[RMDB]
RNA sequence: GGGAACGACUCGAGUAGAGUCGAAAAACGGUCAUACGUGACCGAUCCCAGUUAUAAGUAGUAGUGCCGCAGGUAACCGCUUCCAGAAAAUUGGUUUACCUACUGCCUUCUGCUUAGAAUUGGGAAAAGUCCAUUUAUAAUUCGUUAUAAAUGGACUAAAAGAAACAACAACAACAAC
Reactivity to DMS in 0.01 (KOAc 150mM, MgCl2 10mM, bicine 150mM(pH8.5), 24C), signal-to-noise 8, nucleotides 027 to 126: a120c010g010g000u000c010a040u000a080c190g030u000g000a010c000c000g000a070u000c000c000c000a000g000u000u000a020u000a010a010g010u000a010g010u000a010g020u030g030c000c080g010c050a010g000g010u000a010a010c000c000g020c200u010u010c100c180a180g010a100a080a050a040u010u020g020g000u010u010u020a000c000c000u000a050c000u000g000c010c000u000u000c000u000g000c000u000u000a000g000a010a010u000u000g000g000g000a030a070a090
Reactivity to 2A3 in 0.01 (KOAc 150mM, MgCl2 10mM, bicine 150mM(pH8.5), 24C), signal-to-noise 9, nucleotides 027 to 126: a000c010g000g000u000c000a010u040a110c250g100u040g000a000c000c000g000a010u020c000c000c000a000g000u000u010a020u000a030a000g010u010a000g000u000a000g010u030g130c010c020g000c020a000g000g000u000a000a000c010c010g050c110u140u090c080c040a080g200a150a130a060a080u130u140g010g030u060u080u040a010c000c000u000a010c000u000g000c000c000u010u010c000u000g000c000u000u000a000g000a000a000u000u000g010g000g000a040a120a010
Structure probing data (DMS and 2A3) for a 177-nucleotide construct. For DMS the reverse transcriptase was MarathonRT.